Source: RMDB library M2RFPK, as collected in RNAgym. Chemical mapping of a 207-nucleotide RNA with 2A3.
[RMDB]
RNA sequence: GGGAACGACUCGAGUAGAGUCGAAAAGACUGAUGUAGAGUUCGGUUGGAGCGACAAGUAUUUAGCUUGAGAUAGCUAAAUCACCUCGGUAUGAUUAGGGUGAGACCUCGGAACCGUAGGGGUAUUCAAUGCUGUAUUGCGUUCGCGCAAUACAGAAGGUUUAGCGAAGUUUCGACUUCGCUAAACCAAAAGAAACAACAACAACAAC
Reactivity to 2A3 in 0.01 (KOAc 150mM, MgCl2 10mM, bicine 150mM(pH8.5), 24C), signal-to-noise 1, nucleotides 027 to 156: g000a000c080u050g010a090u120g080u180a010g010a000g090u050u120c030g030g000u030u030g030g030a040g010c030g010a010c030a070a010g030u020a050u050u030u000a000g010c000u000u070g000a010g010a060u110a010g030c000u000a000a000a000u020c000a040c000c000u010c030g000g000u140a100u140g020a090u040u120a020g030g100g000u040g060a040g030a060c000c000u000c050g060g020a030a020c070c020g000u010a050g020g000g000g050u030a010u040u190c080a000a180u160g040c010u000g000u000a000u000u000g000c000g000u000u040c180g000c000g000c200a000a000u000a000c000a000g010a010a050